[RMDB]
Overview:
Chemical mapping of a 177-nucleotide RNA with 2A3 and DMS. For DMS, 10,283 sequencing reads were counted. It was measured as part of the RMDB library M2PK50. The RNA was probed in 150 mM KOAc, 10 mM MgCl2 and 150 mM bicine (pH 8.5) at 24 C.
RNA sequence: GGGAACGACUCGAGUAGAGUCGAAAACGACCGCAGUUCGCUGCGGUCGAAAAGAACUGACUACCGUACGCCUAGCCGGUGUCAGUUUAAGGGCGGAGAUUAAAACCCUGACGUUCGCGUCAGGGAAGAAAUGUACUAACUUCGGUUAGUACAUUUCAAAAGAAACAACAACAACAAC
Reactivity to 2A3 in 0.01 (KOAc 150mM, MgCl2 10mM, bicine 150mM(pH8.5), 24C), signal-to-noise 5, nucleotides 027 to 126: c020g010a000c010c000g020c000a010g020u050u110c150g030c100u000g010c020g000g000u010c000g000a000a010a010a020g020a010a000c010u010g010a010c010u100a050c120c000g030u050a040c070g090c040c090u080a050g060c030c010g000g000u000g000u000c010a000g000u000u020u040a050a030g010g020g050c130g060g030a120g000a100u100u260a040a070a100a160c000c000c000u000g000a000c000g020u050u060c300g010c000g100u010c000a000g000g000g000a000a010
Reactivity to DMS in 0.01 (KOAc 150mM, MgCl2 10mM, bicine 150mM(pH8.5), 24C), signal-to-noise 7, nucleotides 027 to 126: c020g010a000c000c000g020c010a010g010u010u010c180g020c010u000g020c000g000g010u000c000g000a020a020a120a190g010a010a020c000u000g000a020c000u010a030c000c000g010u000a100c130g000c150c100u000a160g010c220c000g000g010u000g000u000c000a010g010u000u000u000a040a140g000g010g010c070g000g010a100g010a110u010u000a050a070a120a110c000c000c000u000g000a010c000g020u000u010c200g010c010g020u000c000a010g000g000g010a010a020